[RMDB]
RNA sequence: GGGAACGACUCGAGUAGAGUCGAAAAGAAAGAACUCUGAGAUAUGAUUGAGUGGAUGAGAUGAGAGAGAAUCUCAUCGAUAGAUGUCUCUCUCGACAUCUAUACACUCUUUCGUGUCGAAAGAGGAGGGUAUUGUAAUCUUCGGAUUACAAUACCCAAAAGAAACAACAACAACAAC
Reactivity to DMS in 0.01 (KOAc 150mM, MgCl2 10mM, bicine 150mM(pH8.5), 24C), signal-to-noise 3, nucleotides 027 to 126: g020a120a140a060g010a090a110c020u000c000u020g000a300g000a010u000a010u000g010a050u000u010g000a020g020u030g000g030a140u040g020a120g010a030u010g000a200g000a030g000a090g000a100a020u020c110u020c020a050u010c070g010a060u010a040g010a020u000g000u000c020u020c130u000c120u020c070g020a040c010a000u000c010u010a000u000a300c000a010c010u000c000u000u010u000c000g070u000g030u000c000g010a090a080a000g000a000g000g000a070
Reactivity to 2A3 in 0.01 (KOAc 150mM, MgCl2 10mM, bicine 150mM(pH8.5), 24C), signal-to-noise 5, nucleotides 027 to 126: g150a010a110a010g050a060a020c000u000c010u020g040a040g000a040u010a000u030g010a010u020u010g000a000g010u010g040g030a100u160g030a060g010a040u080g000a020g010a010g000a000g070a120a090u010c000u010c030a100u030c030g000a010u030a020g010a000u020g090u050c000u010c010u010c020u040c120g010a020c000a000u000c000u000a010u020a020c000a000c000u000c000u010u000u000c000g010u000g000u000c010g030a050a030a010g010a010g010g010a070
This 177-nucleotide RNA was probed chemically with DMS and 2A3. The DMS profile rests on 4,110 reads. Source: RMDB library OK1LIB, as collected in RNAgym. For DMS the reverse transcriptase was MarathonRT.